[RMDB]
RNA sequence: GGGAACGACUCGAGUAGAGUCGAAAACCGUCAUCCGCAUGUGCACUUUUUCGUCGGGCUCGGGCUGGAGAAGUGGUUUCGUCGGAGCGGGCUGCGGAACGUGACGGAAUUGGACUGGUGGGAGGACGCCGAGUUGACCGUCGACGUCGGCUCCGAGGAAAUAGAUCACUUUCGAGUGAUCUAUUUCAAAAGAAACAACAACAACAAC
Reactivity to 2A3 in 0.01 (KOAc 150mM, MgCl2 10mM, bicine 150mM(pH8.5), 24C), signal-to-noise 5, nucleotides 027 to 156: c010c010g040u040c030a090u050c020c010g010c060a070u120g050u110g110c040a050c040u070u030u030u080u070c050g030u030c030g050g060g000c070u060c080g070g010g010c050u130g040g030a040g010a050a040g030u080g060g030u040u030u050c040g030u020c000g020g000a010g020c050g010g020g000c010u030g000c020g030g030a110a070c050g040u030g000a010c010g010g060a030a070u070u110g090g020a020c040u030g020g030u030g030g050g020a150g040g040a080c050g000c020c010g020a020g010u020u050g060a050c020c010g040u050c030g060a040c030g040u030c010g050g010c000u000c000c010g000a030g040
Reactivity to DMS in 0.01 (KOAc 150mM, MgCl2 10mM, bicine 150mM(pH8.5), 24C), signal-to-noise 2, nucleotides 027 to 156: c010c000g030u010c030a110u000c020c020g030c050a120u020g040u000g030c030a070c030u000u000u000u000u000c010g020u000c030g060g010g000c050u000c020g030g000g030c010u010g030g020a080g000a090a110g040u010g000g020u000u010u000c030g040u000c040g030g000a100g030c030g000g030g040c050u000g000c000g000g010a060a080c120g010u010g020a050c030g010g010a050a070u000u010g010g020a100c050u020g030g050u000g000g010g030a140g000g010a090c040g000c000c020g010a070g000u000u010g010a190c030c030g000u000c030g020a060c040g020u000c010g020g020c030u000c000c000g000a200g010